Overview: Source: RMDB library RFMREP, as collected in RNAgym. An RNA of 177 nucleotides, treated with 2A3 and read out base by base. Conditions: 150 mM KOAc, 10 mM MgCl2 and 150 mM bicine (pH 8.5), 24 C. For 2A3, 1,030 sequencing reads were counted.
RNA sequence: GGGAACGACUCGAGUAGAGUCGAAAAAAUGGGAACAUGGAGGAAAGCCUAUCCUGUUUGUUUCCUCCUCCAGAAACAGAGGUGGAAGCUUGGUCCGGUGUUUCCCAAUGCCUCCCAUUCCUAUUGUGUGUUGCUAUUACUUCGGUAAUAGCAACACAAAAGAAACAACAACAACAAC
Reactivity to 2A3 in 0.01 (KOAc 150mM, MgCl2 10mM, bicine 150mM(pH8.5), 24C), signal-to-noise 1, nucleotides 027 to 126: a000a000u030g000g000g000a030a010c010a000u040g060g000a120g070g030a200a000a000g010c000c000u010a070u070c000c020u090g100u120u160u080g010u040u000u000c000c000u000c000c020u000c020c010a110g300a210a150a010c080a030g010a000g020g000u010g020g010a030a000g020c030u090u020g000g020u000c050c000g030g020u060g210u010u010u030c000c010c010a000a000u020g030c010c030u030c000c010c000a000u020u000c010c020u100a300u210u170g070u000